[RMDB]
RNA sequence: GGGAACGACUCGAGUAGAGUCGAAAAAUGGGCACGGGCACCGACGUCGCGAUGAACAGCGCGCGGAUCGUGCUCGUGAAGGGCGACCUGCGCGGCAUCGCGCGGGCGCGCGCGCUCAGCGUCGCGACCGCGAUGCCUCAUUCGUGAGGCAUCGCGGAAAAGAAACAACAACAACAAC
Reactivity to DMS in 0.01 (KOAc 150mM, MgCl2 10mM, bicine 150mM(pH8.5), 24C), signal-to-noise 4, nucleotides 027 to 126: a090u000g000g010g010c020a040c030g000g000g010c060a060c120c070g010a100c100g000u010c020g010c000g000a050u010g020a150a180c300a100g000c010g010c010g000c010g000g010a100u010c080g010u000g010c000u000c010g010u010g000a110a090g000g000g010c000g000a110c000c000u000g010c000g020c000g000g020c230a120u010c030g000c000g000c050g000g000g000c060g010c010g000c010g020c040g010c030u010c090a100g010c100g010u000c010g020c030g000a100
Reactivity to 2A3 in 0.01 (KOAc 150mM, MgCl2 10mM, bicine 150mM(pH8.5), 24C), signal-to-noise 3, nucleotides 027 to 126: a000u090g010g040g000c020a010c030g020g060g000c060a040c080c040g090a100c050g040u190c020g000c000g020a050u120g110a110a080c070a130g030c000g010c000g000c000g030g020a030u070c030g020u050g020c000u000c000g000u050g040a090a050g070g030g000c020g000a160c010c000u000g000c030g000c000g080g110c120a170u260c050g010c000g010c000g000g000g000c050g000c000g010c010g000c000g000c030u070c080a060g080c030g090u080c020g000c010g040a010
The data come from the RNA Mapping Database (RMDB), library OK2TRN. Structure probing data (DMS and 2A3) for a 177-nucleotide construct. Reactivities are rounded to 0.1 and cut off at 0 and 3.